The record gives the reactivity of an RNA of 177 nucleotides to 2A3 and DMS.

RNA sequence: GGGAACGACUCGAGUAGAGUCGAAAAGCUACAUGAAUCAGUAGCAUACAGCAUAGAUACAGAUAGCAUAGAACUACGUAUAUAGUAUGGUAAGUAAUGGGUAGUAGUACUAAGAUAUAAUGGUUCGGUGUUGGGUCGGGUUCGCUCGAUUCGGUGCAAAAGAAACAACAACAACAAC
Reactivity to 2A3 in 0.01 (KOAc 150mM, MgCl2 10mM, bicine 150mM(pH8.5), 24C), signal-to-noise 7, nucleotides 027 to 126: g000c000u010a000c010a050u090g080a080a060u090c010a010g000u010a000g000c000a000u040a010c030a010g010c010a030u040a030g040a020u040a040c020a010g060a060u050a010g000c010a010u020a040g030a020a010c000u010a000c020g020u000a010u000a000u000a020g040u010a010u020g000g020u040a030a030g020u010a030a050u060g010g010g010u030a020g010u000a010g000u000a010c000u010a020a030g050a010u030a000u010a030a070u070g000g000u010u000c010g000
Reactivity to DMS in 0.01 (KOAc 150mM, MgCl2 10mM, bicine 150mM(pH8.5), 24C), signal-to-noise 9, nucleotides 027 to 126: g010c010u000a010c060a080u030g010a110a090u030c130a110g010u000a020g010c010a110u020a080c120a090g010c080a080u020a060g010a070u020a060c080a070g010a100u010a030g000c020a070u020a090g010a040a040c010u000a030c130g010u000a020u010a050u010a040g010u010a030u010g000g010u010a040a070g010u020a060a070u020g000g000g000u010a050g010u010a110g010u000a030c030u010a030a090g000a060u010a020u010a050a100u020g000g000u000u000c030g000
The reactions ran in a buffer of 150 mM KOAc, 10 mM MgCl2 and 150 mM bicine (pH 8.5), at 24 C. For DMS the reverse transcriptase was MarathonRT.